[RMDB]
Overview:
The record gives the reactivity of an RNA of 207 nucleotides to 2A3 and DMS.

RNA sequence: GGGAACGACUCGAGUAGAGUCGAAAAGCGUUUCCCCGCUGAAAGCCCAGAGCACAUUCGGCAAAGAAUUUUGAUGAGCUCAGAUCCCACCGUGGGAAAAAUCAACCCAGUCCAUGCACUCACAAUGGAAUUUCCUGCGCCUCGCACGCAUCACCAAAAUACGUACUCCUUUCGAGGAGUACGUAUUAAAAGAAACAACAACAACAAC
Reactivity to 2A3 in 0.01 (KOAc 150mM, MgCl2 10mM, bicine 150mM(pH8.5), 24C), signal-to-noise 4, nucleotides 027 to 156: g020c000g000u030u090u050c000c010c000c010g000c010u050g070a100a040a000g030c000c040c030a030g000a000g010c010a040c040a080u080u070c060g050g000c090a050a080a060g070a150a120u100u110u130u140g080a080u040g020a010g020c000u000c030a050g010a150u050c010c000c000a040c010c080g050u120g000g030g030a060a100a020a020a020u090c030a020a050c040c010c010a010g040u030c010c000a020u040g030c030a070c090u080c020a050c050a090a080u060g010g040a030a070u040u050u020c010c010u020g000c000g030c020c020u050c040g000c020a020c040g030c000a030u090c020a070c080c020a040a130
Reactivity to DMS in 0.01 (KOAc 150mM, MgCl2 10mM, bicine 150mM(pH8.5), 24C), signal-to-noise 2, nucleotides 027 to 156: g030c050g020u000u000u020c000c000c010c000g020c020u000g010a110a080a170g000c050c030c010a290g030a080g020c080a060c040a140u000u000c030g010g020c010a070a040a120g000a040a060u000u030u010u010g030a080u010g000a130g000c030u000c050a150g000a140u000c010c010c010a050c120c060g010u000g000g020g000a000a060a050a080a090u000c090a040a120c050c030c020a140g000u000c010c000a060u000g030c040a100c050u000c060a050c070a130a050u000g000g040a070a060u000u000u000c040c000u000g000c010g020c030c040u010c110g000c060a040c030g000c010a080u000c020a110c060c100a050a080

Conditions: 150 mM KOAc, 10 mM MgCl2 and 150 mM bicine (pH 8.5), 24 C.